About this RNA: The data come from the RNA Mapping Database (RMDB), library M2RFPK. The record gives the reactivity of an RNA of 207 nucleotides to 2A3. For 2A3, 2,012 sequencing reads were counted.
RNA sequence: GGGAACGACUCGAGUAGAGUCGAAAAGGUGAAAGCGAAUCGGGGAAGAUAAGCUAGCAGCAAAAAGGAACCGAUUCCCACCAAGUUCGGAAAGAGAUACCGGGCGAGGCUCUGAAGAAAGAAUCUCAAACUCCCGCAAGUUUCGACUUGCGGGAAAGUUCUCGAUAAGAUUCGUCUUAUCGAGAACAAAAGAAACAACAACAACAAC
Reactivity to 2A3 in 0.01 (KOAc 150mM, MgCl2 10mM, bicine 150mM(pH8.5), 24C), signal-to-noise 3, nucleotides 027 to 156: g060g000u040g070a200a060a030g040c060g030a020a000u000c010g000g000g020g030a050a030g050a190u090a110a060g030c030u090a040g090c110a000g000c010a020a060a070a060a050g130g000a020a010c000c010g010a000u010u000c010c000c010a000c000c010a070a070g000u020u010c000g000g030a130a130a080g070a040g010a030u050a050c000c020g010g010g000c010g010a040g050g000c010u020c050u120g070a050a030g060a070a090a010g070a040a040u010c010u010c060a160a140a110c040u020c030c000c000g000c000a010a000g010u030u120u140c090g040a040c020u000u000g010c000g000g000g000a000a000a000